[RMDB]
RNA sequence: GGGAACGACUCGAGUAGAGUCGAAAAGACGCCUGUGUGGCGAAGCGAGCAUGAGAAAGAGCCGCACAGUCCAUCUCAUAUAAAGCGGCUAGAUGGAUUGCUCGCAAAAAGAUCCAUAUCACUGAGACGAGGGAUCAUUAUUCGUAAUGAUCCCUCGAAAAGAAACAACAACAACAAC
Reactivity to DMS in 0.01 (KOAc 150mM, MgCl2 10mM, bicine 150mM(pH8.5), 24C), signal-to-noise 2, nucleotides 027 to 126: g000a200c070g000c020c000u000g000u000g020u050g000g010c050g010a070a050g020c020g020a010g010c030a010u000g000a300g000a070a030a170g000a080g020c010c000g000c000a130c130a040g070u010c070c090a100u000c050u000c130a060u000a070u050a080a090a130g000c020g010g000c040u030a040g010a240u020g020g010a150u030u000g000c010u020c000g000c060a000a040a040a070a050g000a090u030c000c000a010u020a030u020c010a150c110u070g000a090g000a250
Reactivity to 2A3 in 0.01 (KOAc 150mM, MgCl2 10mM, bicine 150mM(pH8.5), 24C), signal-to-noise 2, nucleotides 027 to 126: g080a000c040g030c030c000u110g050u120g030u110g090g000c030g000a020a000g000c000g000a030g000c000a020u060g010a000g010a140a000a060g150a010g020c000c000g020c010a020c000a030g060u000c020c000a050u030c010u050c100a050u170a040u040a190a150a010g020c020g010g000c020u050a090g060a110u060g020g000a020u000u010g000c000u050c010g030c060a000a000a000a000a000g020a040u020c030c030a000u050a060u180c080a080c100u110g030a000g020a060
The record gives the reactivity of an RNA of 177 nucleotides to DMS and 2A3. It was measured as part of the RMDB library OK1LIB. Values cover nucleotides 27 to 126.